[RMDB]
Source information
Conditions: 150 mM KOAc, 10 mM MgCl2 and 150 mM bicine (pH 8.5), 24 C. An RNA of 177 nucleotides, treated with DMS and read out base by base. The data come from the RNA Mapping Database (RMDB), library M2PK50. For DMS the reverse transcriptase was MarathonRT. In probing experiments dimethyl sulfate is read out at A N1 and C N3, which are open when not base-paired.
RNA sequence: GGGAACGACUCGAGUAGAGUCGAAAACUGGAUUCUUUCGAGAAUCCAGCAUGUCUAGUCGCUAGCGAACGAUCAACGCUAGGGACUAGACUUUAUUGAUCGCAUUUGCCUCUUUCGAGAGGCAAAACUCGAUCUCCUUGUUCGCAAGGAGAUCGAGAAAAGAAACAACAACAACAAC
Reactivity to DMS in 0.01 (KOAc 150mM, MgCl2 10mM, bicine 150mM(pH8.5), 24C), signal-to-noise 1, nucleotides 027 to 126: c000u010g000g000a050u030u000c000u000u000u010c120g040a010g030a000a000u000c000c000a000g020c190a080u000g000u000c000u000a000g000u000c000g000c000u000a060g010c000g000a060a130c210g020a070u020c130a120a070c000g010c000u010a000g000g000g020a000c000u000a000g000a000c000u000u020u000a050u010u030g020a030u000c070g000c220a220u000u000u000g010c000c000u000c000u000u000u020c150g000a000g020a000g000g000c000a010a000a000a050